This 207-nucleotide RNA was probed chemically with 2A3 and DMS. The RNA was probed in 150 mM KOAc, 10 mM MgCl2 and 150 mM bicine (pH 8.5) at 24 C. DMS (dimethyl sulfate) methylates the pairing face of unpaired adenines and cytosines.

RNA sequence: GGGAACGACUCGAGUAGAGUCGAAAACAUGUUGCUAUGGGACAGAGACCCAGGGGCGUAGUGGCCAAGAUUUCCGUCCUGGUUUGGGAAAUUGGCUGAAGUGUUUUCACUGUAAUAAGUUCAACCAAGGACUUCCCUGGUGGUCCCCUAGUUAGUAACCGUACCUGAUAUUCGUAUCAGGUACGGUAAAAGAAACAACAACAACAAC
Reactivity to 2A3 in 0.01 (KOAc 150mM, MgCl2 10mM, bicine 150mM(pH8.5), 24C), signal-to-noise 1, nucleotides 027 to 156: c090a060u210g050u020u040g010c000u030a030u080g000g000g000a030c030a070g200a090g030a110c010c000c020a030g010g040g010g000c120g070u040a030g160u130g090g000c020c000a020a010g070a200u050u020u000c020c030g110u130c050c060u180g210g000u200u170u190g090g000g000a020a020a020u020u000g000g000c020u080g010a060a000g030u020g050u090u120u130u290c030a010c000u030g040u120a040a070u040a300a000g020u000u020c030a090a070c080c040a170a130g000g020a040c000u070u080c000c000c000u030g030g000u050g000g030u000c010c000c010c000u000a030g010u030u040a010g030u080a010
Reactivity to DMS in 0.01 (KOAc 150mM, MgCl2 10mM, bicine 150mM(pH8.5), 24C), signal-to-noise 2, nucleotides 027 to 156: c030a260u000g010u000u020g020c010u000a100u000g000g000g010a130c050a200g010a130g000a180c100c000c020a050g010g020g020g000c140g020u000a110g100u010g000g050c020c050a060a040g020a110u000u000u010c130c100g030u000c080c040u010g110g040u000u010u010g020g030g000a010a100a300u000u000g020g010c010u000g020a040a060g030u010g020u000u000u000u000c040a080c080u000g030u010a110a110u000a060a080g000u000u000c010a020a040c000c020a070a080g020g020a300c030u000u000c000c000c000u000g050g040u000g020g000u000c000c000c000c010u010a050g020u000u000a060g030u000a120
2A3 is a SHAPE reagent: it acylates the 2'-hydroxyl of flexible nucleotides of all four kinds. For DMS the reverse transcriptase was MarathonRT. Reactivities are given for positions 27 through 156.